Source information: An RNA of 177 nucleotides, treated with DMS and read out base by base. It was measured as part of the RMDB library OK2TST.

RNA sequence: GGGAACGACUCGAGUAGAGUCGAAAAUGCAGCUGAUGGGCCUCGGCGGCGAGCAGGAGCUCCCGUAUUUUGACUGGGAGGCCCCGAGAGCUCGCGAGGGGUACUACAAGAUCCAGUGCGGUGACGAGGAAGGUUAAACGUUCGCGUUUAACCUUCCAAAAGAAACAACAACAACAAC
Reactivity to DMS in 0.01 (KOAc 150mM, MgCl2 10mM, bicine 150mM(pH8.5), 24C), signal-to-noise 1, nucleotides 027 to 126: u010g030c080a030g000c040u000g010a150u010g010g030g030c030c000u000c040g020g020c030g000g000c030g020a020g040c000a180g040g000a050g000c030u000c000c000c000g030u000a050u030u010u000u000g010a140c130u010g010g010g000a030g000g020c010c000c000c000g000a120g000a170g010c000u000c100g030c010g000a300g020g020g000g000u000a080c060u000a090c100a110a070g000a090u020c090c010a060g020u000g010c060g010g000u000g000a160c150g010a190